[RMDB]
RNA sequence: GGGAACGACUCGAGUAGAGUCGAAAAGAUAUGGAAACAUCUGCACAUCAGCGAUGAAAUCGGAAACGAUGGAGCUGUUGUGCAGAGUGUUUCCUAAGUCAAACGCAAACUCUUCGGAGUUUGCGAACACACCGUGGCAGUUCGCUGCCACGGUGUGAAAAGAAACAACAACAACAAC
Reactivity to DMS in 0.01 (KOAc 150mM, MgCl2 10mM, bicine 150mM(pH8.5), 24C), signal-to-noise 1, nucleotides 027 to 126: g010a010u010a300u000g000g000a000a000a010c000a050u000c000u000g000c000a000c030a010u010c000a010g000c000g000a060u010g000a060a120a020u020c000g000g000a200a040a220c010g000a030u000g010g000a080g020c000u010g010u000u010g020u000g000c010a010g010a030g000u000g020u000u000u000c000c000u000a030a040g000u000c000a050a130a300c000g020c000a020a000a020c000u010c000u000u000c240g040g010a040g030u000u000u000g000c020g000a000a080
Source information
Conditions: 150 mM KOAc, 10 mM MgCl2 and 150 mM bicine (pH 8.5), 24 C. Structure probing data (DMS) for a 177-nucleotide construct. For DMS the reverse transcriptase was MarathonRT. Values cover nucleotides 27 to 126. It was measured as part of the RMDB library TTRDEL.